[RMDB]
RNA sequence: GGGAACGACUCGAGUAGAGUCGAAAAACGCACUGAUAUGUACCAUACACAUAGUUGGUCGCAACAUCAUAUAAUAUUGUGACGCGCGUCAUACGACGCGCCGCGCGAUACUAUGCAUAAUAUGUAUUGGUCGAUCAUGCGUAACCGCGUGUAUGGCCUGACGAUACUGUUUCGACAGUAUCGUCAGAAAAGAAACAACAACAACAAC
Reactivity to DMS in 0.01 (KOAc 150mM, MgCl2 10mM, bicine 150mM(pH8.5), 24C), signal-to-noise 2, nucleotides 027 to 156: a110c020g010c030a090c140u000g030a060u000a040u000g030u000a090c000c010a060u020a080c070a060c010a040u010a030g010u000u000g050g050u000c050g030c020a080a070c050a060u010c100a160u000a110u000a110a120u000a010u000u000g000u000g000a030c080g010c030g030c000g020u000c040a140u000a220c150g020a000c010g060c000g000c000c030g030c100g000c020g000a080u000a020c000u000a050u000g010c100a140u000a100a150u020a180u020g040u000a050u000u000g040g010u000c000g000a020u000c020a060u000g020c050g000u010a020a160c030c040g020c050g000u000g010u000a080u000g010g010c060
Reactivity to 2A3 in 0.01 (KOAc 150mM, MgCl2 10mM, bicine 150mM(pH8.5), 24C), signal-to-noise 6, nucleotides 027 to 156: a000c020g020c010a040c150u040g010a010u090a070u220g090u170a010c000c010a010u000a010c000a010c000a000u030a020g020u030u080g120g020u170c020g000c020a030a090c020a110u160c060a010u070a010u080a220a170u180a120u180u120g020u030g040a040c050g000c010g000c000g000u000c010a110u160a300c230g010a010c000g000c000g000c000c020g040c010g000c000g010a000u010a040c000u030a010u010g020c020a040u090a200a070u110a140u050g030u010a030u070u220g000g000u000c000g000a010u000c000a000u010g000c010g000u010a030a020c000c030g080c070g040u080g000u040a180u120g050g060c040